[RMDB]
Chemical mapping of a 177-nucleotide RNA with 2A3 and DMS.
The RNA was probed in 150 mM KOAc, 10 mM MgCl2 and 150 mM bicine (pH 8.5) at 24 C.
For 2A3, 3,217 sequencing reads were counted.
For 2A3 the reverse transcriptase was SuperScript II with manganese.
The data come from the RNA Mapping Database (RMDB), library TTRDES.
RNA sequence: GGGAACGACUCGAGUAGAGUCGAAAAGAUAUGGAUCCCUUGCAUCUUUUGACGCCUAUGGAUCGGAAACGAUCCUAAGGGCGAUAAGAUGGAGGGAUCCUAAGUCAAAGCUAUCUUCGGAUAGCAACCUUGGUCUUAUGUUCGCAUAAGACCAAGGAAAAGAAACAACAACAACAAC
Reactivity to 2A3 in 0.01 (KOAc 150mM, MgCl2 10mM, bicine 150mM(pH8.5), 24C), signal-to-noise 2, nucleotides 027 to 126: g000a000u080a070u130g000g000a000u000c000c010c110u000u050g300c010a010u010c010u120u170u140u180g300a190c080g010c010c010u070a060u180g000g000a030u030c020g000g030a080a090a040c000g000a010u020c000c010u010a040a060g010g000g010c010g000a000u010a000a010g000a000u030g000g020a000g050g000g010a000u000c000c000u000a020a010g010u000c020a090a000a160g000c010u010a000u000c000u070u090c290g170g010a020u010a010g000c020a020a090
Reactivity to DMS in 0.01 (KOAc 150mM, MgCl2 10mM, bicine 150mM(pH8.5), 24C), signal-to-noise 2, nucleotides 027 to 126: g020a030u050a300u010g040g020a000u000c000c010c000u010u000g030c000a030u000c000u000u000u020u010g010a140c110g000c000c030u000a300u020g000g000a000u000c000g000g010a100a140a180c060g010a020u000c000c000u020a060a160g000g000g010c000g020a060u000a030a000g000a020u000g000g020a040g020g020g070a000u000c000c000u040a000a080g010u000c070a130a180a130g010c000u000a010u000c000u000u030c300g000g000a010u000a000g010c000a060a060